[RMDB]
RNA sequence: GGGAACGACUCGAGUAGAGUCGAAAAGAAUGUGUGUCAGAGAUGAUAUGGCCUGCAAAGAUAGAAAUACUCCCUGUCCCUUUAGAGAGAAAGGCUGUCUGCCUGCCUCUGCUGUAGGUGAUGCUCUGAGCUUUGCACUGGUUCAUUUUCCUCCUGAACGUCAUUUACCAUUCGUGGUAAAUGACGUAAAAGAAACAACAACAACAAC
Reactivity to DMS in 0.01 (KOAc 150mM, MgCl2 10mM, bicine 150mM(pH8.5), 24C), signal-to-noise 3, nucleotides 027 to 156: g010a160a100u000g040u000g020u010g000u000c030a060g000a100g020a120u000g020a130u000a070u010g010g020c030c030u030g010c020a030a050a030g000a110u010a090g010a060a070a130u010a130c060u000c020c020c030u000g010u000c030c010c000u000u000u000a100g020a070g010a050g010a030a070a050g020g030c020u000g010u010c160u000g020c050c000u010g000c190c020u010c050u000g010c060u000g010u000a030g020g000u010g020a100u000g010c060u000c050u000g000a130g020c060u000u000u000g020c000a050c050u010g020g010u010u010c030a100u000u000u000u000c010c030u000c040c030u000g000a070
Reactivity to 2A3 in 0.01 (KOAc 150mM, MgCl2 10mM, bicine 150mM(pH8.5), 24C), signal-to-noise 5, nucleotides 027 to 156: g120a030a080u150g040u010g020u010g020u070c010a000g050a010g010a110u040g010a000u040a020u060g020g000c000c000u010g010c010a010a020a000g040a020u110a060g100a040a090a020u230a080c060u050c020c030c030u030g030u040c040c010c000u050u120u090a030g000a000g000a000g010a090a050a010g010g000c020u040g170u170c160u170g000c000c000u010g010c010c000u060c020u100g120c040u040g030u060a020g000g080u180g060a020u060g010c030u000c010u050g090a100g020c000u010u000u020g000c020a050c140u080g030g000u210u240c010a020u180u160u040u030c000c020u010c010c010u020g020a010